The data come from the RNA Mapping Database (RMDB), library RNAMAK. The record gives the reactivity of an RNA of 207 nucleotides to 2A3 and DMS. For 2A3 the reverse transcriptase was SuperScript II with manganese. For 2A3, 3,568 sequencing reads were counted. The RNA was probed in 150 mM KOAc, 10 mM MgCl2 and 150 mM bicine (pH 8.5) at 24 C.
[RMDB]
RNA sequence: GGGAACGACUCGAGUAGAGUCGAAAAGCAGUAAGGUUCGCCUUACUGCAAAAACCGUAGGACCGCCAUUAGGCUAUGAAGUAUCCUUCGAAAGAGGGAUAUGGAGCCUACCGUGGUCGGUCCUAAACGGAAAAACGACGGACUUCGGUCCGUCGAAGGUCAGAAUAAGAUUCGUCUUAUUCUGACCAAAAGAAACAACAACAACAAC
Reactivity to 2A3 in 0.01 (KOAc 150mM, MgCl2 10mM, bicine 150mM(pH8.5), 24C), signal-to-noise 3, nucleotides 027 to 156: g000c000a000g010u010a000a010g040g020u050u120c180g160c020c000u000u010a010c010u020g000c010a010a010a010a000a010c000c000g000u010a010g000g000a000c000c000g000c010c000a010u010u030a020g010g000c010u070a300u280g010a010a000g000u000a000u000c000c010u000u000c010g040a090a060a030g010a000g000g000g010a000u000a000u010g000g010a000g010c010c000u030a030c030c060g030u010g010g030u090c080g000g010u000c000c000u010a010a000a000c010g020g040a030a020a050a030a020c000g020a000c000g000g000a000c000u010u060c270g100g000u000c000c000g000u000c000g000a010a000
Reactivity to DMS in 0.01 (KOAc 150mM, MgCl2 10mM, bicine 150mM(pH8.5), 24C), signal-to-noise 1, nucleotides 027 to 156: g020c000a020g000u000a010a010g030g030u010u010c300g000c020c000u000u040a000c010u000g000c030a000a000a030a020a020c000c000g020u000a010g040g010a020c010c020g000c000c000a090u010u000a000g050g010c000u000a100u040g000a300a300g010u000a010u000c020c000u000u000c000g020a150a160a300g010a050g000g000g010a000u000a000u000g020g000a070g020c000c010u010a000c300c070g020u010g000g000u000c010g060g030u010c000c010u000a000a030a070c010g010g000a030a070a060a050a080c010g020a010c000g000g000a020c010u020u000c290g040g000u010c000c010g000u000c010g010a020a070